Overview:
The record gives the reactivity of an RNA of 177 nucleotides to DMS and 2A3. The data come from the RNA Mapping Database (RMDB), library TTRINS. For 2A3, 6,165 sequencing reads were counted. Values cover nucleotides 27 to 126. DMS adducts were read by reverse transcription with MarathonRT.
RNA sequence: GGGAACGACUCGAGUAGAGUCGAAAAGAUAUGGACGUUGACAUGGCUGUUUGGGACGUUGAAACCCCUAGUCUCGGAAACGAGACUAGGGGUGGAGUCCUGAUAGCCAACAGCAACGUCCUAAGUCCACUGCAUCUAUGUUCGCAUAGAUGCAGUGAAAAGAAACAACAACAACAAC
Reactivity to DMS in 0.01 (KOAc 150mM, MgCl2 10mM, bicine 150mM(pH8.5), 24C), signal-to-noise 3, nucleotides 027 to 126: g010a080u010a300u010g000g000a010c010g040u000u000g020a060c090a300u000g010g000c000u000g020u000u000u000g040g000g010a010c000g020u000u030g000a170a260a040c000c000c000c010u000a010g010u000c000u000c010g010g010a130a080a230c010g000a010g010a000c010u000a010g000g000g000g010u000g010g000a050g020u000c010c010u000g000a010u000a010g020c000c000a020a040c280a190g000c010a000a000c010g000u000c000c000u010a010a050g000u010c030
Reactivity to 2A3 in 0.01 (KOAc 150mM, MgCl2 10mM, bicine 150mM(pH8.5), 24C), signal-to-noise 2, nucleotides 027 to 126: g050a030u140a080u250g020g000a000c010g000u010u000g050a140c050a190u070g030g000c020u030g180u230u150u300g050g000g000a000c020g130u260u050g000a030a030a040c000c000c000c000u010a010g000u000c010u010c000g050g030a140a140a070c010g000a000g000a010c000u000a000g020g000g010g000u010g000g010a000g000u000c010c000u000g000a000u020a000g000c010c000a000a000c010a010g020c000a010a000c000g000u000c000c000u000a000a010g000u000c010